[RMDB]
RNA sequence: GGGAACGACUCGAGUAGAGUCGAAAAAUCAGAUAAAUAUAGGCAUGAGAGCUGACUCAACCUCGGCCGGGUCCUCAACACAUAUUCGUUCAUUCAUGUAAUAUUUAGUAAACAUUCACUAUGUUCCGUGAUAAUGCACAUUCGUGUGCAUUAUCACAAAAGAAACAACAACAACAAC
Reactivity to 2A3 in 0.01 (KOAc 150mM, MgCl2 10mM, bicine 150mM(pH8.5), 24C), signal-to-noise 1, nucleotides 027 to 126: a000u060c000a010g060a040u090a090a200a000u190a010u130a100g150g000c060a050u060g010a050g040a040g110c090u040g020a010c010u010c030a040a040c080c010u020c020g030g030c020c000g100g020g000u000c000c000u000c000a120a010c000a000c020a010u080a070u110u120c040g030u040u070c000a000u080u000c040a030u060g060u060a070a080u050a100u160u140u100a070g010u130a010a080a080c020a080u130u210c060a040c120u110a040u130g020u120u050c040c050
Reactivity to DMS in 0.01 (KOAc 150mM, MgCl2 10mM, bicine 150mM(pH8.5), 24C), signal-to-noise 1, nucleotides 027 to 126: a050u000c030a060g000a190u000a080a050a070u000a110u000a040g010g010c030a040u000g000a110g060a130g040c100u010g010a020c040u010c050a090a110c300c030u000c040g000g010c030c050g030g000g020u000c040c000u010c040a060a180c090a090c080a010u000a060u000u000c100g000u000u000c040a140u000u020c060a000u000g000u000a050a090u000a010u010u010u000a060g010u000a100a070a040c090a030u000u010c090a050c070u000a040u000g000u000u000c080c040